[RMDB]
RNA sequence: GGGAACGACUCGAGUAGAGUCGAAAAACCGAGGGGGGUUCGAACUCAAGAAGAGAAGAUUUUCGAGGAAAUACUCCCAAGAAGUUCCCGGAGGGAUCCAAGAGACGGAUGACUUUCCCCUAUUGGUAAAGCAUAAGCUUCGGCUUAUGCAAAAGAAACAACAACAACAAC
Reactivity to DMS in 0.01 (KOAc 150mM, MgCl2 10mM, bicine 150mM(pH8.5), 24C), signal-to-noise 9, nucleotides 027 to 129: a110c000c000g030a060g040g030g000g010g040g040u020u040c100g030a120a110c030u050c050a050a060g040a070a040g010a060g000a170a080g030a070u010u010u000u010c010g010a080g040g040a040a070a100u050a080c080u010c020c050c070a090a070g000a090a120g020u000u000c040c010c030g020g010a030g000g000g000a080u040c050c030a060a120g030a090g000a080c110g020g060a070u030g000a050c090u030u040u040c010c010c010c090u020a100u040u010g040g000u000a090a090a110
Reactivity to 2A3 in 0.01 (KOAc 150mM, MgCl2 10mM, bicine 150mM(pH8.5), 24C), signal-to-noise 2, nucleotides 027 to 129: a000c010c000g010a050g000g000g000g000g010g000u030u050c030g030a060a020c010u020c050a040a100g080a080a010g040a020g020a110a020g020a060u050u030u030u070c030g000a030g000g020a020a040a020u080a090c020u020c020c020c000a010a010g060a030a010g010u030u020c000c000c000g000g010a000g010g010g010a000u010c030c030a060a020g030a000g010a070c060g030g010a020u060g030a050c010u020u040u030c000c000c000c000u090a160u090u120g070g000u100a150a020a000